This 207-nucleotide RNA was probed chemically with 2A3 and DMS.
RNA sequence: GGGAACGACUCGAGUAGAGUCGAAAAGUCUGUGCGUUUCCAUUUGAGUAUCCUGAAAACGGGCUUUUCAGCAUGGAACGUACAUAUUAAAUAGUAGGAGCGCAUAGUGGCCCGUAUAGCAGGCAUUGAGGCGAGGAUUGUUUCGACAAUCCUCGAAAGAUAGUCCCUGAUUCGUCAGGGACUAUCUAAAAGAAACAACAACAACAAC
Reactivity to 2A3 in 0.01 (KOAc 150mM, MgCl2 10mM, bicine 150mM(pH8.5), 24C), signal-to-noise 2, nucleotides 027 to 156: g080u040c070u080g000u000g000c000g010u010u190u120c010c010a030u050u040u070g040a040g010u060a050u060c000c000u020g030a020a020a020a100c100g030g050g000c040u080u070u050u060c030a060g010c060a050u020g000g040a020a000c000g010u010a010c010a000u050a010u000u180a050a070a050u140a050g110u010a020g000g060a030g010c050g010c040a030u070a100g060u090g060g020c020c000c020g000u020a000u060a050g040c060a030g010g000c010a010u060u140g050a050g050g060c020g000a000g000g010a000u000u010g010u000u120u050c100g010a010c000a000a000u000c000c000u000c000g000a000a000
Reactivity to DMS in 0.01 (KOAc 150mM, MgCl2 10mM, bicine 150mM(pH8.5), 24C), signal-to-noise 2, nucleotides 027 to 156: g020u000c060u010g010u000g070c000g010u010u000u000c010c010a070u010u000u010g020a120g010u000a080u000c050c010u010g010a030a050a090a180c070g000g020g050c070u000u000u000u010c030a060g040c160a050u000g020g000a050a060c030g000u000a000c060a050u000a070u000u010a050a090a140u010a090g010u000a110g040g030a090g030c000g020c050a120u010a100g020u000g010g010c000c010c030g070u010a030u000a160g030c060a080g010g010c030a090u000u000g020a120g020g030c000g000a010g030g010a020u000u000g010u000u000u000c240g030a060c000a010a020u000c010c000u010c010g000a020a030
For 2A3, 1,617 sequencing reads were counted. The RNA was probed in 150 mM KOAc, 10 mM MgCl2 and 150 mM bicine (pH 8.5) at 24 C.